An RNA of 177 nucleotides, treated with 2A3 and DMS and read out base by base.
[RMDB]
RNA sequence: GGGAACGACUCGAGUAGAGUCGAAAAUUCUUGAACUUCUUCUUCUUCUUCUUCUUCUUCUUAGAUUUCUUUCUCAUUGCCUAUAUCUUUCUUGAUGUGGCACAGAAUAAGUUCAAGAAAGCUGUGGGACAGACGAGUAUUUCGAUACUCGUCUGUCAAAAGAAACAACAACAACAAC
Reactivity to 2A3 in 0.01 (KOAc 150mM, MgCl2 10mM, bicine 150mM(pH8.5), 24C), signal-to-noise 3, nucleotides 027 to 126: u010u000c000u010u020g060a030a000c000u000u000c000u030u000c010u040u000c010u020u020c010u010u010c010u010u010c000u020u000c020u120u000c000u000u060a080g030a150u160u190u000c020u020u120u000c040u000c060a210u160u190g030c010c020u080a080u020a040u100c030u000u110u020c060u060u080g010a000u040g050u070g080g050c020a020c010a050g110a050a030u110a110a010g020u010u020c000a020a000g000a060a000a000g050c010u060g030u120g090g050
Reactivity to DMS in 0.01 (KOAc 150mM, MgCl2 10mM, bicine 150mM(pH8.5), 24C), signal-to-noise 1, nucleotides 027 to 126: u000u020c000u040u020g000a080a040c000u010u000c030u000u010c000u050u010c110u000u000c060u000u020c060u010u000c020u000u000c050u030u030c030u040u010a140g000a290u010u000u000c050u000u000u000c020u000c050a150u050u000g000c080c000u000a030u020a020u000c020u000u070u100c030u020u000g000a110u030g000u020g020g000c080a130c290a020g000a050a080u000a030a020g000u000u010c000a000a030g000a000a000a080g060c090u010g060u000g000g000
The data come from the RNA Mapping Database (RMDB), library RFM100.